Source: RMDB library OK3TST, as collected in RNAgym. The record gives the reactivity of an RNA of 207 nucleotides to 2A3. The RNA was probed in 150 mM KOAc, 10 mM MgCl2 and 150 mM bicine (pH 8.5) at 24 C.

[RMDB]
RNA sequence: GGGAACGACUCGAGUAGAGUCGAAAACGUUCGUCAACCCGUCGUACGGGGUGAUCCAGAAGCCGCGGUUCCUGCGGACGAAGGCCCGCAACGCGAACACGUCGAGGAAGCGACGCAUCUUCGAGCUGGAGUUUCUCAACCGCGGGCACUGGCCGAAAACGGGUAAAAUCUUCGGAUUUUACCCGUUAAAAGAAACAACAACAACAAC
Reactivity to 2A3 in 0.01 (KOAc 150mM, MgCl2 10mM, bicine 150mM(pH8.5), 24C), signal-to-noise 1, nucleotides 027 to 156: c020g000u010u000c010g040u030c020a030a050c010c040c010g060u090c120g100u300a070c020g000g000g030g030u010g010a000u020c020c020a000g010a090a040g040c000c020g000c010g000g040u070u020c000c060u040g050c030g020g010a020c010g030a040a010g050g020c030c070c020g030c020a020a070c110g040c050g000a100a020c060a010c070g080u100c010g040a080g050g060a090a000g070c000g130a090c020g000c030a170u030c050u060u060c010g030a030g010c040u050g050g000a030g120u040u150u060c110u030c010a010a010c000c040g000c000g010g000g010c020a010c040u050g000g000c080c000g030a050a090